[RMDB]
RNA sequence: GGGAACGACUCGAGUAGAGUCGAAAAGAAAGAAAGAACCCUUCCCGCGGGGCUGGAUCUUCCAGAUGGUGCGGGCCGGGACAAGCCGGAGAGUGUCCCGGUUUCAGAAACAACCAUCGGCAGCCAAACUAGACUACCCACUUCGGUGGGUAGUCAACGUUUACGAUACGUUCGCGUAUCGUAAACGAAAAGAAACAACAACAACAAC
Reactivity to 2A3 in 0.01 (KOAc 150mM, MgCl2 10mM, bicine 150mM(pH8.5), 24C), signal-to-noise 1, nucleotides 027 to 156: g020a050a060a010g050a010a120a030g000a100a120c040c010c000u010u010c000c010c010g060c060g010g070g000g000c020u030g040g020a090u150c110u230u060c070c020a070g020a030u040g010g120u070g000c080g000g010g000c000c000g000g000g000a010c010a000a050g060c030c020g060g000a080g000a000g040u010g010u010c000c000c000g020g000u000u020u030c000a010g020a020a080a090c040a090a020c020c010a030u040c010g040g020c010a000g040c020c000a130a070a050c090u080a050g000a000c000u000a000c020c000c000a010c000u010u020c070g060g000u000g000g000g020u000a000g000u000c000a000a000